[RMDB]
RNA sequence: GGGAACGACUCGAGUAGAGUCGAAAAUGAGAAGACACCUGAAGUGACUGAGAGAGUGAGCUAUGUAAAUAUCUGAGGGAAGAGAAUUCUAGGCAAGUGCAAAUGCCCUGAGGCAAGUGUGUGCUUAGUGUGUUUGUGGAACCGCAUGGAGACUAGAUACUCAUAUCAGGUUCGCCUGAUAUGAGUAAAAAGAAACAACAACAACAAC
Reactivity to DMS in 0.01 (KOAc 150mM, MgCl2 10mM, bicine 150mM(pH8.5), 24C), signal-to-noise 3, nucleotides 027 to 156: u000g010a160g020a080a080g010a130c050a090c020c040u010g010a100a120g020u000g010a110c060u020g000a130g000a090g010a090g040u000g010a090g010c040u000a040u000g010u010a060a110a080u010a080u000c030u010g020a110g010g010g000a070a080g000a100g000a060a130u000u010c030u000a040g020g020c060a050a120g030u000g000c040a040a050a120u000g010c010c010c030u000g010a070g020g030c040a050a170g000u010g040u000g010u000g000c010u020u000a070g020u000g020u010g020u000u000u010g020u000g000g000a060a090c040c020g020c030a110u000g020g010a110g000a160c010u000a060g010a300
Reactivity to 2A3 in 0.01 (KOAc 150mM, MgCl2 10mM, bicine 150mM(pH8.5), 24C), signal-to-noise 3, nucleotides 027 to 156: u080g000a010g010a060a050g040a030c030a020c070c040u040g040a080a020g030u030g060a050c090u080g010a010g000a010g000a010g060u070g020a010g000c020u050a080u130g070u140a060a150a100u140a060u090c070u050g020a040g000g040g000a040a000g010a000g020a080a130u120u020c020u030a030g020g010c020a060a050g050u030g060c010a080a000a050u060g020c000c010c020u080g060a070g000g020c010a040a110g010u020g030u020g000u020g130c000u010u040a060g000u030g010u020g000u040u050u090g030u010g000g030a030a010c020c010g020c070a030u040g030g010a050g020a020c040u030a020g020a130